RNA sequence: GGGAACGACUCGAGUAGAGUCGAAAAAGCGAAGACAUGGCUACACACGAUCACAUCCCUCAUUUCAUCUUUCGGGUCUUCAGCUUGCCUCGCCUGAAUCACUGCACUCGUGUGGUGAGCGGGGGCUCUAUAUAAUUAUGUUCGCAUAAUUAUAUAGAAAAGAAACAACAACAACAAC
Reactivity to DMS in 0.01 (KOAc 150mM, MgCl2 10mM, bicine 150mM(pH8.5), 24C), signal-to-noise 7, nucleotides 027 to 126: a050g010c020g010a060a050g010a050c040a080u010g010g010c030u010a090c080a080c060a060c070g000a090u010c060a070c080a070u010c020c010c010u000c070a080u010u010u010c050a060u010c040u000u010u010c040g010g010g000u000c010u000u000c020a090g010c030u000u010g010c010c000u000c040g010c030c080u000g010a130a120u010c010a020c010u010g000c020a030c050u020c270g020u000g040u000g000g000u010g000a030g000c050g000g000g010g000g010c060u000
Reactivity to 2A3 in 0.01 (KOAc 150mM, MgCl2 10mM, bicine 150mM(pH8.5), 24C), signal-to-noise 9, nucleotides 027 to 126: a000g050c030g030a040a010g030a020c030a080u120g050g010c020u110a020c040a010c010a010c060g060a080u080c030a020c020a130u050c010c010c010u030c030a070u030u120u070c030a050u020c040u020u110u060c030g070g000g010u010c000u020u020c020a030g020c020u060u090g040c000c000u020c020g060c010c020u080g070a060a030u040c010a010c020u020g010c010a010c020u090c110g100u030g010u020g030g010u010g010a010g010c020g010g010g000g020g000c000u000
This 177-nucleotide RNA was probed chemically with DMS and 2A3. Conditions: 150 mM KOAc, 10 mM MgCl2 and 150 mM bicine (pH 8.5), 24 C. 2A3 adducts were read by reverse transcription with SuperScript II with manganese.